[RMDB]
RNA sequence: GGGAACGACUCGAGUAGAGUCGAAAAGCUCAGAGACUUUGCCAGAGCAUCUCAGAGAAUAACAAGUUUCCAAAGGGCAGGAGAAACAGGGAUUUAGCACUAAUGGGCACUGCAGGGUCUGGGACAUCUCAGCUGGGCAUCAGGAAAUAAUUUUUGAGAUUAGCAUAGGUUUCGACCUAUGCUAAUCAAAAGAAACAACAACAACAAC
Reactivity to 2A3 in 0.01 (KOAc 150mM, MgCl2 10mM, bicine 150mM(pH8.5), 24C), signal-to-noise 1, nucleotides 027 to 156: g020c010u000c000a010g040a020g010a040c010u150u170u090g070c100c000a010g000a000g060c020a040u000c050u000c070a060g010a040g020a100a090u170a060a030c080a120a090g010u050u030u000c040c000a020a020a020g030g000g010c000a010g040g000a010g020a030a080a000c050a040g020g030g000a060u120u160u130a050g000c010a000c050u010a040a140u030g000g000g000c010a040c040u040g000c040a030g030g000g030u080c060u020g030g000g020a070c010a050u030c030u010c070a040g010c010u010g020g000g010c010a040u050c030a040g120g060a000a080a060u300a000a140u170u040u060u060u080g080a060